[RMDB]
RNA sequence: GGGAACGACUCGAGUAGAGUCGAAAAAGGUUGUCCUCGACGCGCCCCAGUCGACGGUGGCGAGUCAUCUGCGAGAGCUCAAAGACGCGGGACUGGUCAAGACGCGACGCCAAGGCAAGUGGACCUACUAUCGGAUCGGUGACACUGCUGCACUCCACCUUACUGCAGUCUUCGGACUGCAGUAAGGAAAAGAAACAACAACAACAAC
Reactivity to 2A3 in 0.01 (KOAc 150mM, MgCl2 10mM, bicine 150mM(pH8.5), 24C), signal-to-noise 1, nucleotides 027 to 156: a000g040g000u070u030g100u100c050c030u040c040g020a050c020g030c000g030c000c000c000c000a020g000u050c070g030a210c060g050g040u080g000g000c030g020a010g000u040c100a140u030c140u060g110c020g040a190g010a040g040c000u000c060a090a090a020g050a020c020g000c080g150g000g000a040c000u000g010g000u120c050a140a010g030a050c070g000c020g040a010c000g040c050c030a070a030g000g050c030a150a000g040u050g020g010a030c020c010u120a120c070u100a180u090c010g030g030a020u010c030g000g000u050g050a040c050a000c070u040g000c020u030g000c050a030c100u000c030c000a040